This 177-nucleotide RNA was probed chemically with DMS.
[RMDB]
RNA sequence: GGGAACGACUCGAGUAGAGUCGAAAAGGGCAUAUCUUCGGAUAUGCCCAAACGUCGAAAAGGAAAAGUCGCAUGCGUCGUUCGAACAACGUCGCAUGCGACAAACUCGGAGGUUCGCCUCCGAGAAUCUUUUCAAGUUGUUCGCAACUUGAAAAGAAAAAGAAACAACAACAACAAC
Reactivity to DMS in 0.01 (KOAc 150mM, MgCl2 10mM, bicine 150mM(pH8.5), 24C), signal-to-noise 2, nucleotides 027 to 126: g020g010g050c000a010u000a000u000c000u010u030c220g020g020a000u000a000u000g000c010c010c000a000a010a050c150g020u000c060g010a010a020a040a070g030g010a080a050a120a150g010u000c000g040c000a010u000g000c010g030u000c000g020u010u010c120g000a090a250c120a010a010c000g000u010c000g000c000a010u000g000c010g000a020c000a000a020a060c000u000c000g000g000a030g000g010u000u000c220g020c030c000u000c000c000g000a000g000a050a030
Conditions: 150 mM KOAc, 10 mM MgCl2 and 150 mM bicine (pH 8.5), 24 C.